About this RNA
This 207-nucleotide RNA was probed chemically with 2A3 and DMS. For 2A3 the reverse transcriptase was SuperScript II with manganese. The reactions ran in a buffer of 150 mM KOAc, 10 mM MgCl2 and 150 mM bicine (pH 8.5), at 24 C. The DMS profile rests on 5,129 reads. DMS adducts were read by reverse transcription with MarathonRT.
RNA sequence: GGGAACGACUCGAGUAGAGUCGAAAAGGCUGCGUAUCACUCUAGGGUACGUGGUAGUGCGAUAUAAGAAGCACUGGUACAUGCCGGCAGGGACAGUUAAGAGAUGGCCGCAGUCUCGUGUCCCUGCAAAAGGAGUUCUCGUUCGCGAGAACUCCAAUCGGUAUAAAGGGUUCGCCCUUUAUACCGAAAAAGAAACAACAACAACAAC
Reactivity to 2A3 in 0.01 (KOAc 150mM, MgCl2 10mM, bicine 150mM(pH8.5), 24C), signal-to-noise 4, nucleotides 027 to 156: g090g010c010u010g010c010g010u000a000u030c020a070c210u170c160u220a090g130g000g010u010a000c000g000u020g000g030u050a030g000u010g000c030g020a040u020a030u060a300a090g100a120a010g000c010a010c020u010g040g010u130a100c060a090u130g050c020c020g040g000c020a010g000g020g000a000c000a040g040u140u130a140a030g010a000g000a020u040g090g060c070c040g050c090a030g010u000c000u000c000g020u000g000u000c000c000c000u000g000c000a000a000a000a000g000g000a000g000u000u000c010u000c010g020u060u030c170g010c010g100a000g000a000a000c000u000c000c000a000a020
Reactivity to DMS in 0.01 (KOAc 150mM, MgCl2 10mM, bicine 150mM(pH8.5), 24C), signal-to-noise 2, nucleotides 027 to 156: g020g000c000u000g020c000g030u010a100u000c040a100c090u020c170u000a170g040g010g020u010a000c010g030u000g000g010u000a010g030u000g000c010g010a210u010a150u010a150a170g010a170a230g000c010a020c000u000g020g010u000a050c060a160u010g030c030c000g000g010c010a040g000g000g000a020c010a040g000u010u000a120a100g010a080g000a040u000g030g030c090c210g010c070a270g000u000c000u010c010g000u000g010u000c000c000c010u000g000c030a020a030a100a120g000g010a050g030u000u000c010u000c000g030u000u010c290g000c030g020a030g010a010a010c000u020c000c000a010a020